[RMDB]
Chemical mapping of a 207-nucleotide RNA with DMS and 2A3. Conditions: 150 mM KOAc, 10 mM MgCl2 and 150 mM bicine (pH 8.5), 24 C. As a SHAPE reagent, 2A3 marks flexible, mostly unpaired nucleotides at the ribose 2'-OH.

RNA sequence: GGGAACGACUCGAGUAGAGUCGAAAAUUCUGAAAGUGAGGGCAGGAGAGAUGAGCUUUGGCCAGGAAUUCAGCGAGUGACUUUGCGUGGAGUGUCAGCUUCUCCACAUUGCUGGGUGUUAGCUUACCCCUGUCUGGCACCAGCAGCAAAAACAGAGCUAUGUAUCUAGUUUCGACUAGAUACAUAGAAAAGAAACAACAACAACAAC
Reactivity to DMS in 0.01 (KOAc 150mM, MgCl2 10mM, bicine 150mM(pH8.5), 24C), signal-to-noise 2, nucleotides 027 to 156: u010u000c010u000g020a130a140a080g000u010g010a180g000g010g030c030a080g000g010a090g010a120g030a090u010g010a130g020c040u000u020u010g040g000c020c040a060g000g010a070a120u000u010c050a060g040c030g030a110g000u010g010a110c090u010u000u040g040c040g040u010g010g010a030g050u000g020u010c100a100g040c100u000u000c010u000c000c010a060c040a200u010u000g010c000u010g020g000g030u010g040u000u000a070g010c080u010u000a220c050c030c000c080u010g020u000c020u010g000g000c010a060c010c000a080g000c020a060g010c090a020a040a080a060a070c040a090g000a120g010
Reactivity to 2A3 in 0.01 (KOAc 150mM, MgCl2 10mM, bicine 150mM(pH8.5), 24C), signal-to-noise 6, nucleotides 027 to 156: u080u010c010u090g050a080a050a040g040u060g020a050g010g030g000c020a030g030g030a060g010a010g020a130u080g020a010g020c030u100u090u100g070g000c030c020a030g040g040a040a060u110u100c030a010g020c030g040a040g060u080g050a080c070u070u100u150g020c060g000u010g010g000a010g010u050g080u090c060a030g020c050u080u020c000u000c000c000a020c000a040u020u070g020c010u020g000g010g100u040g060u080u030a000g000c020u020u110a110c000c020c000c010u030g070u050c010u000g010g000c000a010c000c000a020g110c000a010g010c020a030a020a030a010a030c070a030g060a020g070